An RNA of 177 nucleotides, treated with 2A3 and DMS and read out base by base. Reactivities are given for positions 27 through 126. For DMS the reverse transcriptase was MarathonRT. For 2A3 the reverse transcriptase was SuperScript II with manganese. The reactions ran in a buffer of 150 mM KOAc, 10 mM MgCl2 and 150 mM bicine (pH 8.5), at 24 C.

RNA sequence: GGGAACGACUCGAGUAGAGUCGAAAAACAAAAACUAACAAUUGUUAUUGCUGUCUAAGCUUCAAAAGGGUAAUUUUAAAAUGGGAAGUUAAAGAACAAUUGGAGGAUGACGAUGUGAGCACUAAAGCAAAUAAUAGGCAUUCGUGCCUAUUAUUUGAAAAGAAACAACAACAACAAC
Reactivity to 2A3 in 0.01 (KOAc 150mM, MgCl2 10mM, bicine 150mM(pH8.5), 24C), signal-to-noise 9, nucleotides 027 to 126: a000c080a020a060a010a020a020c070u140a040a020c040a070a070u060u050g040u060u050a090u090u110g080c020u020g060u080c030u080a060a050g020c000u070u080c060a060a050a060a040g070g000g070u090a120a220u080u090u090u130a100a200a040a080u140g030g010g030a010a040g020u050u110a120a080a050g070a060a020c030a030a040u040u030g030g010a020g050g030a040u080g020a010c040g020a040u050g080u050g050a010g020c030a000c070u090a070a030a020g020
Reactivity to DMS in 0.01 (KOAc 150mM, MgCl2 10mM, bicine 150mM(pH8.5), 24C), signal-to-noise 7, nucleotides 027 to 126: a080c080a050a060a060a080a090c110u010a070a170c060a070a070u000u000g000u000u000a050u000u010g020c040u000g000u000c040u010a100a100g010c040u000u010c050a050a060a080a100g010g000g020u020a050a060u010u030u020u030a020a040a080a080u030g010g000g000a070a040g010u000u010a030a040a060g000a030a030c050a020a060u000u000g000g000a120g010g000a050u010g000a070c100g000a050u010g010u010g000a040g010c100a080c090u010a040a070a080g000